[RMDB]
RNA sequence: GGGAACGACUCGAGUAGAGUCGAAAACAUCUCAAGGAGAAAACCAUGUUCAAGAGCAUCAAGAGCAAGGCGGCUGCUGUUGCCGCAGGUACCGUCGCACUGGCCGGUUCGGCGAUGGCUGCGGUGCGCGACACUGAUGAUUCGUCAUCAGUGUCGCAAAAGAAACAACAACAACAAC
Reactivity to 2A3 in 0.01 (KOAc 150mM, MgCl2 10mM, bicine 150mM(pH8.5), 24C), signal-to-noise 1, nucleotides 027 to 126: c020a090u060c010u020c040a040a100g150g010a050g070a020a160a000a040c030c010a060u070g050u060u100c060a070a010g020a040g070c000a100u090c050a020a010g040a000g130c000a010a030g040g000c000g030g030c010u040g000c010u050g130u230u090g020c020c000g000c000a000g070g090u080a060c000c000g040u030c000g000c010a040c080u090g150g020c040c040g030g190u050u110c120g030g000c020g020a030u060g130g000c000u020g000c000g000g020u040g020c010
Reactivity to DMS in 0.01 (KOAc 150mM, MgCl2 10mM, bicine 150mM(pH8.5), 24C), signal-to-noise 1, nucleotides 027 to 126: c260a080u000c020u020c050a120a110g010g010a040g000a040a020a080a100c070c020a040u010g020u000u000c090a050a120g000a090g010c110a030u020c070a030a130g010a090g000c040a050a110g010g010c080g010g000c030u000g000c030u000g020u000u010g000c000c000g000c030a020g010g010u000a050c030c000g030u010c060g010c150a060c050u000g030g000c170c070g000g030u000u010c000g010g000c020g010a040u000g030g040c010u000g000c020g000g020u000g000c040